Record summary
This 177-nucleotide RNA was probed chemically with 2A3 and DMS. For DMS, 22,757 sequencing reads were counted. For 2A3 the reverse transcriptase was SuperScript II with manganese. The reactions ran in a buffer of 150 mM KOAc, 10 mM MgCl2 and 150 mM bicine (pH 8.5), at 24 C. Values cover nucleotides 27 to 126.
[RMDB]
RNA sequence: GGGAACGACUCGAGUAGAGUCGAAAAUUAAGAACGGACGUCCCAUCACUGUGGGUCACCGCUUCCGUCCCAUUCAUGACUUCGGUUAUGUGGCCUUGGAUAUUGUCCAUUUGAUUGCGGAGGACUCCGGACUAUAUCAAUUCGUUGAUAUAGUCCGAAAAGAAACAACAACAACAAC
Reactivity to 2A3 in 0.01 (KOAc 150mM, MgCl2 10mM, bicine 150mM(pH8.5), 24C), signal-to-noise 9, nucleotides 027 to 126: u120u050a090a020g040a080a010c030g010g080a030c060g050u030c020c030c010a020u100c060a030c110u200g030u090g060g010g000u030c020a010c040c000g030c110u060u000c010c010g050u020c010c030c000a030u110u110c030a020u060g050a020c010u040u030c170g100g000u040u030a030u070g030u040g020g010c010c040u040u070g050g000a040u140a080u190u250g040u010c010c010a020u060u050u160g140a130u060u120g030c020g010g030a060g060g030a020c010u010c050
Reactivity to DMS in 0.01 (KOAc 150mM, MgCl2 10mM, bicine 150mM(pH8.5), 24C), signal-to-noise 9, nucleotides 027 to 126: u000u010a090a120g010a050a050c040g000g010a100c130g010u000c000c000c010a110u000c190a130c260u010g020u000g000g000g010u000c020a100c020c010g010c120u000u000c020c030g000u000c030c000c020a110u010u010c070a040u010g000a040c020u000u000c100g020g010u000u000a030u000g010u000g010g010c130c040u000u010g010g000a080u010a070u000u010g010u000c010c010a070u000u010u000g000a160u000u000g010c040g000g010a180g010g010a060c060u000c080